[RMDB]
An RNA of 177 nucleotides, treated with 2A3 and DMS and read out base by base. Conditions: 150 mM KOAc, 10 mM MgCl2 and 150 mM bicine (pH 8.5), 24 C. It was measured as part of the RMDB library OK2TRN. For 2A3, 13,402 sequencing reads were counted. The DMS profile rests on 27,113 reads.
RNA sequence: GGGAACGACUCGAGUAGAGUCGAAAAUCUGCGCCGUACGCGUACUAGUACGCGCUGGUACCGGCGCCAUGAUCUGUGGCCCGCGCGAUCGACGAGGCCAGCAGAGUACCGGCCGAGCGGUACGUGCGGGCUGCCUAGGUUUCGACCUAGGCAGCCCAAAAGAAACAACAACAACAAC
Reactivity to 2A3 in 0.01 (KOAc 150mM, MgCl2 10mM, bicine 150mM(pH8.5), 24C), signal-to-noise 7, nucleotides 027 to 126: u030c020u040g010c000g000c030c030g030u050a020c040g010c020g060u040a060c060u080a080g140u040a020c050g040c030g000c090u050g110g010u050a050c050c050g020g020c050g010c030c010a130u190g020a060u050c030u050g070u070g060g000c000c010c000g020c020g000c060g120a170u230c050g120a210c010g020a190g020g000c000c020a030g060c030a020g040a020g040u040a050c020c010g010g040c030c050g060a040g040c010g020g010u040a100c010g010u050g060c050
Reactivity to DMS in 0.01 (KOAc 150mM, MgCl2 10mM, bicine 150mM(pH8.5), 24C), signal-to-noise 9, nucleotides 027 to 126: u000c030u000g010c010g010c040c030g020u010a070c030g010c060g010u000a030c080u010a170g010u000a030c040g000c040g020c100u000g020g010u000a050c150c030g010g010c040g010c030c170a020u010g010a110u000c030u000g020u000g010g010c000c000c010g010c020g030c110g010a080u010c050g010a090c020g010a260g010g000c000c010a030g020c040a050g010a120g000u010a100c090c050g010g010c040c040g010a160g010c010g000g010u000a030c010g010u010g020c150